[RMDB]
RNA sequence: GGGAACGACUCGAGUAGAGUCGAAAAGAAGGCGUAUGGCGAUGUAUGCUGGAGCGGCUAGAAAAGCAAAUGUAGGCAUAAGUAACGAUAAAGGGGGCGAGAAACCCCCUCGCCGUAAGACUAAGGUUAGAGUUCCAACAUUCGUGUUGGAACUCUAAAAAGAAACAACAACAACAAC
Reactivity to DMS in 0.01 (KOAc 150mM, MgCl2 10mM, bicine 150mM(pH8.5), 24C), signal-to-noise 3, nucleotides 027 to 126: g030a230a000g010g010c020g000u010a030u030g000g020c010g000a140u030g000u000a020u000g040c010u000g000g010a070g000c150g010g030c010u000a070g010a120a140a080a030g000c020a020a060a080u040g010u010a170g040g040c020a090u000a060a060g010u000a100a050c130g030a040u000a060a080a040g020g020g000g010g010c020g030a170g000a100a070a300c020c000c000c000c010u000c020g040c020c030g010u010a070a050g030a200c090u000a060a090g000g000u000
Reactivity to 2A3 in 0.01 (KOAc 150mM, MgCl2 10mM, bicine 150mM(pH8.5), 24C), signal-to-noise 2, nucleotides 027 to 126: g090a010a080g040g060c090g070u090a060u100g000g020c010g000a010u030g020u060a040u050g000c010u040g000g010a040g040c050g000g000c000u020a050g050a070a110a000a000g010c040a040a040a040u220g000u040a040g010g040c000a030u010a150a060g100u050a040a000c030g060a040u130a060a100a020g000g000g010g000g000c020g060a110g150a060a100a040c000c000c010c000c000u040c000g020c010c010g000u010a010a000g050a060c020u020a040a040g050g000u000